[RMDB]
RNA sequence: GGGAACGACUCGAGUAGAGUCGAAAAUGGAUUUGGUCAUUGUAAUAUGUAGAAUAUUUGAUUUUAGUCCCUCAAAAUGAGGACUAAAAUGAAUAUUAUAGGGACCAAUUUCAAUAUGAAAUGAUUUGUGACACUAAGAGUUCGCUCUUAGUGUCACAAAAGAAACAACAACAACAAC
Reactivity to 2A3 in 0.01 (KOAc 150mM, MgCl2 10mM, bicine 150mM(pH8.5), 24C), signal-to-noise 1, nucleotides 027 to 126: u230g000g010a000u090u000u000g000g000u000c000a000u000u070g000u000a000a110u000a000u000g150u050a020g160a250a010u170a130u300u000u120g100a010u000u000u000u000a000g000u030c180c040c000u000c000a270a270a000a190u300g020a000g020g000a000c000u000a000a000a000a000u000g030a020a020u000a000u020u000a010u100a010g000g000g000a000c000c000a000a000u000u000u010c000a000a000u080a090u110g100a060a130a000u080g040a060u000u000u000